[RMDB]
RNA sequence: GGGAACGACUCGAGUAGAGUCGAAAACACUGAGUAUCCAGUUCUUACACUGUGACCUUGAACUAGGGAAUGAUGUGUCAUGGGAGGUCACACGGACAGCAUUAGUCAACGUGUUCUCAAUACUGAGUACAGCUACGGGAUUCGUCCCGUAGCUGUAAAAAGAAACAACAACAACAAC
Reactivity to 2A3 in 0.01 (KOAc 150mM, MgCl2 10mM, bicine 150mM(pH8.5), 24C), signal-to-noise 1, nucleotides 027 to 126: c040a030c120u120g030a010g040u040a090u000c020c000a040g070u040u040c030u070u060a030c040a030c000u050g000u050g060a060c000c010u090u100g150a130a070c060u070a080g200g000g110a050a120u080g140a060u120g100u040g060u010c010a090u040g200g000g010a020g050g000u020c070a020c000a010c000g000g000a020c000a070g000c040a060u000u160a140g020u090c040a020a090c060g030u030g080u100u000c000u030c030a090a090u220a180c060u070g040a050g060
Reactivity to DMS in 0.01 (KOAc 150mM, MgCl2 10mM, bicine 150mM(pH8.5), 24C), signal-to-noise 2, nucleotides 027 to 126: c030a100c090u030g030a150g010u000a050u000c080c040a070g040u000u000c070u000u000a070c150a050c160u000g020u000g020a070c100c010u000u000g000a130a060c100u000a100g010g000g020a130a020u010g000a110u000g010u000g000u000c070a110u000g000g010g010a050g000g040u000c130a020c020a050c140g000g000a030c070a120g010c120a030u000u000a090g010u000c040a050a200c070g000u010g010u010u000c000u000c040a130a050u000a110c120u010g010a110g010